[RMDB]
RNA sequence: GGGAACGACUCGAGUAGAGUCGAAAAGGGGUUUUGCCAUGUUGGCCGGGCUGGGCUCGAACCCCUGAUCUCAGGCGAUCUGCCUGCCUCGGCUUCCCAAAGUGCUGGGAUUACAGGUGCAUGAGCCUACGUUUAUUACAUUCGUGUAAUAAACGUAAAAAGAAACAACAACAACAAC
Reactivity to DMS in 0.01 (KOAc 150mM, MgCl2 10mM, bicine 150mM(pH8.5), 24C), signal-to-noise 9, nucleotides 027 to 126: g000g010g010g010u000u000u010u000g010c010c020a140u050g010u030u020g010g020c030c040g000g000g020c020u040g010g020g020c010u000c070g000a020a010c010c010c000c000u000g000a040u000c020u010c020a080g000g010c020g000a120u010c040u010g000c020c010u000g000c140c010u010c030g010g000c010u010u010c040c050c110a080a110a110g020u030g010c050u000g000g000g010a070u020u030a190c050a030g000g010u000g010c150a040u020g000a130g000c010c010
Reactivity to 2A3 in 0.01 (KOAc 150mM, MgCl2 10mM, bicine 150mM(pH8.5), 24C), signal-to-noise 6, nucleotides 027 to 126: g020g010g010g010u020u030u090u080g020c030c020a080u200g080u170u170g100g010c020c010g020g000g000c030u230g060g120g000c010u030c070g020a020a010c010c000c000c000u000g030a030u010c020u010c010a010g010g000c010g030a080u010c010u040g000c000c000u020g020c010c000u020c010g010g000c000u070u090c030c030c010a070a100a010g150u160g030c030u020g000g010g000a010u050u160a070c010a010g020g000u010g020c030a040u300g010a000g000c000c000
Chemical mapping of a 177-nucleotide RNA with DMS and 2A3. For 2A3 the reverse transcriptase was SuperScript II with manganese. Conditions: 150 mM KOAc, 10 mM MgCl2 and 150 mM bicine (pH 8.5), 24 C.